[RMDB]
RNA sequence: GGGAACGACUCGAGUAGAGUCGAAAACAACAUUCUUAUGCAGCCUAAUCCUUCACUGAAAAAGGCUGCAACGCCAGUUGUGAAGGAGCCCCAUGCAAGACCGUGCCUGCAAAACUUUAUUAAUUCACCUUAAUAGGUGGUUCGCCACCUAUUAAGGAAAAGAAACAACAACAACAAC
Reactivity to DMS in 0.01 (KOAc 150mM, MgCl2 10mM, bicine 150mM(pH8.5), 24C), signal-to-noise 4, nucleotides 027 to 126: c060a080a100c130a140u020u010c070u000u000a130u000g020c030a020g000c010c030u000a110a170u000c010c030u020u000c070a040c050u000g010a050a110a120a140a050g010g010c010u000g000c070a030a030c110g010c050c090a080g010u000u010g010u000g000a040a050g020g020a140g010c030c020c020c050a090u010g010c040a070a080g000a040c060c050g010u000g000c030c020u000g010c080a030a060a050a080c130u000u000u010a120u020u010a060a120u000u010c080a150
Reactivity to 2A3 in 0.01 (KOAc 150mM, MgCl2 10mM, bicine 150mM(pH8.5), 24C), signal-to-noise 3, nucleotides 027 to 126: c030a030a000c020a100u160u070c040u100u200a110u140g010c000a000g010c000c010u090a100a060u040c000c010u080u050c060a080c110u050g050a040a030a010a040a050g010g000c000u000g010c010a000a000c010g020c020c020a070g010u070u010g000u030g050a030a010g000g000a020g030c010c000c000c000a030u090g000c020a070a050g010a060c020c020g050u040g030c010c010u020g010c000a030a030a080a120c080u240u210u120a140u130u170a200a130u120u120c020a040